[RMDB]
RNA sequence: GGGAACGACUCGAGUAGAGUCGAAAAUCCGCUAUAGCGGGGCCGAAUUCCCACUCGAGGUGGGACGACUUUAUGGUCUGACUUAAGGGAUUGGUGUUGACGCCCGGGUCCUGCGCAACAGGAACCCUAGGCGAGUACAAUUCGUUGUACUCGCCUAAAAAGAAACAACAACAACAAC
Reactivity to DMS in 0.01 (KOAc 150mM, MgCl2 10mM, bicine 150mM(pH8.5), 24C), signal-to-noise 3, nucleotides 027 to 126: u000c010c000g010c060u010a080u080a100g010c100g030g000g000g040c040c030g010a120a100u010u000c010c010c010a050c040u000c240g000a090g020g010u000g010g000g010a130c240g000a070c090u000u010u020a080u050g000g000u000c000u000g010a100c040u020u000a130a110g000g000g020a060u020u000g010g000u000g040u010u000g010a090c160g040c010c000c020g050g000g060u010c020c010u010g000c140g050c300a170a130c030a030g000g000a010a110c010c000c020
Reactivity to 2A3 in 0.01 (KOAc 150mM, MgCl2 10mM, bicine 150mM(pH8.5), 24C), signal-to-noise 2, nucleotides 027 to 126: u010c060c000g000c090u160a090u180a200g020c000g000g010g000g020c010c010g000a020a080u140u010c020c010c000a000c010u070c070g210a140g150g000u010g000g010g050a020c050g030a040c020u010u140u250a070u300g030g000u000c000u010g070a130c010u120u110a110a060g020g020g040a020u010u030g090g030u110g080u030u060g020a050c050g000c000c000c000g000g000g010u000c010c000u010g010c090g010c020a060a100c000a080g000g000a040a050c000c000c000